RNA sequence: GGGAACGACUCGAGUAGAGUCGAAAAGGGAAGACGACAGCUGGCUGCACUAAGGAACGUUCCUGAUGUAAGAACUUGAUUCUGACGUCAGCAAGGUUGAACAACGAGAGUAGCGAGGCGUUAGCCAUGGGUAAAAAAGACAGUAAUCACCAGAUUAUAACGUGAGCAAGUUCGCUUGCUCACGUUAAAAAGAAACAACAACAACAAC
Reactivity to DMS in 0.01 (KOAc 150mM, MgCl2 10mM, bicine 150mM(pH8.5), 24C), signal-to-noise 1, nucleotides 027 to 156: g010g000g000a150a050g000a120c020g030a110c030a070g000c040u000g010g020c010u010g090c060a050c000u010a100a060g000g040a080a050c070g010u000u000c060c000u010g010a020u010g000u000a050a080g040a010a020c050u010u000g010a300u010u000c000u000g010a040c090g020u000c010a000g040c070a010a030g010g040u000u000g010a070a100c010a090a100c060g000a070g010a110g000u000a070g010c060g000a190g070g030c010g010u010u020a130g010c070c010a090u040g030g010g010u010a000a030a060a100a090a030g010a070c040a060g010u000a080a040u010c040a040c060c040a150g000a180u000u000a200
Reactivity to 2A3 in 0.01 (KOAc 150mM, MgCl2 10mM, bicine 150mM(pH8.5), 24C), signal-to-noise 2, nucleotides 027 to 156: g040g020g000a030a010g040a000c080g000a000c030a020g040c090u040g000g010c010u050g000c040a000c030u040a010a070g040g000a020a010c000g060u080u050c000c020u000g040a000u150g030u070a040a040g000a010a000c020u160u130g050a090u300u000c030u050g000a050c060g000u010c020a010g030c060a020a100g030g010u050u060g050a080a030c080a020a020c030g000a020g000a040g020u050a000g030c010g090a020g070g020c020g050u010u080a010g010c050c000a030u050g030g000g050u170a080a110a000a000a000a050g100a020c000a000g120u080a140a010u150c070a050c100c030a000g110a110u080u080a080